[RMDB]
RNA sequence: GGGAACGACUCGAGUAGAGUCGAAAAGACCGUGUCUUGAAGGUCGAGGGAAUGACCUCAGCCUGCCACUGAGGGCUAACUGUGGCGUGAGUGUUGGCUCCAGGAGGUGCCAGUGGGAGGGCACUGGAAAUAGCAUGUUGUUCGCAACAUGCUAUUUAAAAGAAACAACAACAACAAC
Reactivity to DMS in 0.01 (KOAc 150mM, MgCl2 10mM, bicine 150mM(pH8.5), 24C), signal-to-noise 9, nucleotides 027 to 126: g010a190c020c040g020u010g010u000c030u010u010g050a170a070g010g010u000c050g010a060g010g010g010a160a130u010g000a130c010c000u000c010a060g010c020c000u000g010c020c030a120c010u000g000a110g010g000g010c020u000a040a200c030u000g010u010g000g010c030g020u000g010a110g020u000g010u010u010g000g010c020u000c100c010a050g000g000a260g010g010u000g010c020c010a030g010u000g000g010g000a080g010g010g010c030a020c020u000g010g000
Reactivity to 2A3 in 0.01 (KOAc 150mM, MgCl2 10mM, bicine 150mM(pH8.5), 24C), signal-to-noise 7, nucleotides 027 to 126: g060a010c010c030g020u010g030u020c050u070u150g140a110a020g020g010u050c040g000a040g030g040g040a220a300u250g140a190c000c000u010c010a020g000c010c010u050g050c010c000a020c010u020g020a190g040g060g010c010u020a040a020c020u030g020u040g060g000c050g070u140g100a120g040u250g120u160u300g100g010c000u000c020c000a020g000g040a050g010g020u050g130c000c000a010g010u040g000g030g020a070g020g000g000c010a010c050u090g050g000

Conditions: 150 mM KOAc, 10 mM MgCl2 and 150 mM bicine (pH 8.5), 24 C. This 177-nucleotide RNA was probed chemically with DMS and 2A3. Reactivities are given for positions 27 through 126. The 2A3 profile rests on 13,893 reads. 2A3 adducts were read by reverse transcription with SuperScript II with manganese. The DMS profile rests on 26,785 reads. The data come from the RNA Mapping Database (RMDB), library OK2TRN.